[RMDB]
Chemical mapping of a 177-nucleotide RNA with DMS and 2A3. Source: RMDB library TTRDEL, as collected in RNAgym. Values cover nucleotides 27 to 126. Reactivities are rounded to 0.1 and cut off at 0 and 3. The 2A3 profile rests on 4,214 reads. The DMS profile rests on 1,649 reads.

RNA sequence: GGGAACGACUCGAGUAGAGUCGAAAAGAUAUGGACGAGAACUACGAUGAACAGCAGCAUCGAUCUCGGAAACGAGGGAGCUGCUGAAUCGCUCGUCCUAAGUCAAACUCGCACUUCGGUGCGAGAACGAUCUAACCAACUUCGGUUGGUUAGAUCGAAAAGAAACAACAACAACAAC
Reactivity to DMS in 0.01 (KOAc 150mM, MgCl2 10mM, bicine 150mM(pH8.5), 24C), signal-to-noise 2, nucleotides 027 to 126: g000a050u000a300u020g010g030a000c020g020a020g000a060a030c150u000a300c030g000a000u000g020a150a060c010a020g000c010a010g010c020a250u000c160g000a060u010c000u000c000g020g010a070a070a150c010g000a010g000g000g000a050g010c010u000g010c000u030g000a030a030u000c000g030c000u000c000g010u000c000c000u000a000a110g000u000c020a080a130a120c000u000c000g030c010a000c000u000u000c250g000g020u000g070c000g000a000g000a030a070
Reactivity to 2A3 in 0.01 (KOAc 150mM, MgCl2 10mM, bicine 150mM(pH8.5), 24C), signal-to-noise 2, nucleotides 027 to 126: g010a000u090a020u190g020g000a000c070g020a020g010a200a060c210u270a060c300g020a050u080g120a210a050c020a010g000c010a000g000c000a110u300c060g080a090u060c010u000c030g050g000a060a050a040c010g000a010g000g040g000a020g000c000u000g000c010u010g010a000a000u000c010g020c010u010c000g000u000c000c000u000a040a000g000u010c020a050a020a090c000u000c000g020c000a000c000u060u060c300g100g010u000g010c000g010a000g000a020a020